[RMDB]
RNA sequence: GGGAACGACUCGAGUAGAGUCGAAAAUUUCAAGAUGAGCCCAGCAACUACUCUUAGAUCUUUGGUUGAAAGGACUUAGCACCCACUGUUUCAGGUGGCUUUUCAUUGGGUCAUCCUGCCUAAUUUCUCCAUCAUUUAUUCAGUCAUGGAACUGGUAGAUGAGUGAAAAUUUCGAUUUUCACUCAUCAAAAGAAACAACAACAACAAC
Reactivity to DMS in 0.01 (KOAc 150mM, MgCl2 10mM, bicine 150mM(pH8.5), 24C), signal-to-noise 2, nucleotides 027 to 156: u000u000u010c030a100a080g010a090u010g000a090g000c010c020c000a170g030c040a050a050c030u000a050c040u010c040u010u000a170g020a050u000c020u000u010u000g020g010u000u000g010a090a110a080g020g010a060c060u010u000a130g000c050a110c080c030c000a100c050u000g030u030u000u000c070a110g000g020u000g010g020c030u000u000u000u000c120a140u000u010g000g000g000u010c060a060u000c010c010u010g000c080c020u000a020a100u000u000u000c030u020c010c020a050u000c040a100u000u010u000a090u020u010c090a070g020u000c040a080u010g030g010a070a110c030u000g000g010u000a100
Reactivity to 2A3 in 0.01 (KOAc 150mM, MgCl2 10mM, bicine 150mM(pH8.5), 24C), signal-to-noise 4, nucleotides 027 to 156: u070u090u080c010a000a030g030a040u050g020a030g060c010c010c000a010g020c020a030a050c010u080a040c010u050c020u110u160a080g050a150u070c040u080u110u120g050g010u040u080g080a110a080a070g070g010a030c040u090u070a020g000c010a040c010c010c010a020c040u050g020u070u110u130c040a030g010g020u010g050g000c000u100u060u040u050c040a060u060u070g010g000g000u010c010a040u040c000c020u020g040c000c010u080a100a080u020u060u040c050u030c050c010a080u110c020a050u140u100u200a080u120u160c010a000g020u000c020a100u160g100g020a120a020c010u010g000g020u000a050